[RMDB]
RNA sequence: GGGAACGACUCGAGUAGAGUCGAAAAGCUUUAUAACCUGCGCUGAGCCCUUCUCCCCCAGCUUGCCUGUGUCCUAGGGAAUUGGAAGGUCAUCCUUCACAGGAUCGUGUGGAAGUCCUGCUCGGGGUCCAAACAUGGUAAUUCGUUACCAUGUUAACCAUCAAGUACUAUUCGUAGUACUUGAUGGAAAAGAAACAACAACAACAAC
Reactivity to DMS in 0.01 (KOAc 150mM, MgCl2 10mM, bicine 150mM(pH8.5), 24C), signal-to-noise 2, nucleotides 027 to 156: g000c030u010u000u000a130u000a070a100c030c020u000g000c070g050c030u000g020a160g010c010c010c060u000u010c030u010c020c020c020c000c030a100g000c050u010u000g050c030c030u000g000u000g010u000c030c040u000a120g020g010g000a050a110u000u000g010g010a090a050g020g000u000c050a090u000c010c000u000u000c050a090c050a050g020g000a040u000c060g030u000g040u000g020g010a120a090g000u000c020c010u000g020c040u010c050g000g030g000g010u000c030c050a110a030a000c010a020u000g010g030u000a010a030u000u000c300g020u010u000a010c000c000a020u010g010u000u010a040a170
Reactivity to 2A3 in 0.01 (KOAc 150mM, MgCl2 10mM, bicine 150mM(pH8.5), 24C), signal-to-noise 4, nucleotides 027 to 156: g020c040u140u170u010a140u100a170a100c050c050u040g040c040g020c090u080g040a050g020c020c030c010u150u050c070u100c020c020c030c000c010a020g000c020u050u050g040c010c010u050g010u020g010u090c000c030u030a050g040g060g020a030a070u100u080g050g010a040a030g020g040u100c020a080u120c010c010u080u080c020a040c000a060g030g000a050u060c020g030u070g010u050g110g030a060a040g030u020c020c010u010g030c010u010c030g020g020g000g000u000c020c030a030a030a000c000a000u000g000g010u000a010a020u050u050c070g040u020u000a000c000c000a000u000g010u000u020a010a020

The data come from the RNA Mapping Database (RMDB), library M2RFPK.
Chemical mapping of a 207-nucleotide RNA with DMS and 2A3.
Values cover nucleotides 27 to 156.
In probing experiments dimethyl sulfate is read out at A N1 and C N3, which are open when not base-paired.
The reactions ran in a buffer of 150 mM KOAc, 10 mM MgCl2 and 150 mM bicine (pH 8.5), at 24 C.